[RMDB]
RNA sequence: GGGAACGACUCGAGUAGAGUCGAAAAACGUUGCCGCCAGCAUUUGCUCAGCCAUUGCCAUGCCAACGCCAGUGGCUAGCCCUUGGCCCAGAGGCCCAGUGGUGGUCUCCACACCCGGGGUGUCACAUCGGUGCAUUUUAUUCGUAAAAUGCACCGAAAAAGAAACAACAACAACAAC
Reactivity to DMS in 0.01 (KOAc 150mM, MgCl2 10mM, bicine 150mM(pH8.5), 24C), signal-to-noise 2, nucleotides 027 to 126: a110c090g020u010u010g020c000c030g010c030c050a080g010c040a050u000u010u010g000c030u010c080a080g020c040c020a070u010u010g000c050c030a100u010g030c060c070a070a070c120g000c080c050a090g060u010g030g020c020u000a080g010c000c030c020u000u000g020g000c020c180c100a200g000a110g010g000c020c000c030a250g010u010g020g040u000g010g000u010c030u020c000c050a150c300a090c030c010c020g000g020g030g030u000g030u000c050a030c100a130
Reactivity to 2A3 in 0.01 (KOAc 150mM, MgCl2 10mM, bicine 150mM(pH8.5), 24C), signal-to-noise 1, nucleotides 027 to 126: a000c010g060u020u050g020c040c030g000c030c020a030g040c020a090u060u080u130g020c050u070c160a050g000c030c010a040u040u020g000c040c000a050u110g030c010c020a070a010c050g050c070c040a020g020u000g010g000c020u000a050g000c000c000c000u040u090g000g000c000c050c000a040g020a030g010g040c030c020c010a120g070u210g120g030u150g030g000u000c010u000c010c000a040c000a010c030c000c050g000g000g000g040u110g040u050c030a030c000a110